[RMDB]
RNA sequence: GGGAACGACUCGAGUAGAGUCGAAAAGAUAUGGAAUACCAGCGCAUGGAUGGACCAGUCGGAAACGAUAAGGACGAAGCCAUGACGCUGAGUAUUCCUAAGUCAAACCACAUGUUCGCAUGUGGAAGAGAUUUAACAACUUCGGUUGUUAAAUCUCAAAAGAAACAACAACAACAAC
Reactivity to DMS in 0.01 (KOAc 150mM, MgCl2 10mM, bicine 150mM(pH8.5), 24C), signal-to-noise 4, nucleotides 027 to 126: g000a020u020a300u010g000g000a020a010u000a000c000c000a010g010c000g020c010a010u000g000g000a090u000g000g000a110c010c020a300g020u000c010g020g000a160a090a160c020g000a010u010a080a140g010g010a220c060g000a190a120g000c000c000a010u000g010a150c000g030c000u010g000a050g010u010a000u000u000c000c000u010a000a030g000u010c020a110a090a180c000c000a000c000a000u010g010u010u010c220g030c010a000u000g000u000g000g010a060a060
This 177-nucleotide RNA was probed chemically with DMS.
It was measured as part of the RMDB library TTRDEL.